Chemical mapping of a 177-nucleotide RNA with 2A3 and DMS. The DMS profile rests on 7,646 reads. 2A3 is a SHAPE reagent: it acylates the 2'-hydroxyl of flexible nucleotides of all four kinds. Conditions: 150 mM KOAc, 10 mM MgCl2 and 150 mM bicine (pH 8.5), 24 C. Values cover nucleotides 27 to 126.

RNA sequence: GGGAACGACUCGAGUAGAGUCGAAAAAGCAGGAUGCUGCGGCUCAGCAUGAGGUCAUGCCAACGGCCUAUGUGAGUGCGCUGGAGACAAUGCCGACAGUGGGUGAGUUGGUAGCCAAUCACACAGACAUCAUUACUGACUUCGGUCAGUAAUGAUGAAAAGAAACAACAACAACAAC
Reactivity to 2A3 in 0.01 (KOAc 150mM, MgCl2 10mM, bicine 150mM(pH8.5), 24C), signal-to-noise 5, nucleotides 027 to 126: a000g060c050a040g020g070a070u140g010c020u040g010c010g050g000c010u020c030a110g020c010a060u050g180a040g040g020u030c030a060u190g120c030c020a040a020c050g030g000c010c010u020a040u030g080u030g020a070g010u150g140c030g000c030u060g000g030a030g010a020c080a070a080u070g010c000c010g020a050c030a030g060u100g020g050g020u040g020a120g020u030u050g020g010u020a030g010c000c020a020a060u070c020a020c000a000c010a040g100a060
Reactivity to DMS in 0.01 (KOAc 150mM, MgCl2 10mM, bicine 150mM(pH8.5), 24C), signal-to-noise 6, nucleotides 027 to 126: a080g010c040a060g000g000a130u010g010c050u000g010c040g010g010c020u010c030a090g010c040a040u000g010a080g000g000u000c020a140u010g010c090c150a090a100c200g010g010c010c010u000a050u000g010u000g000a080g040u000g020c030g030c030u010g010g000a120g010a040c090a080a090u000g020c010c030g010a090c100a050g010u010g000g000g010u010g010a080g020u000u000g000g020u010a060g000c050c040a060a090u000c070a040c110a090c130a080g010a240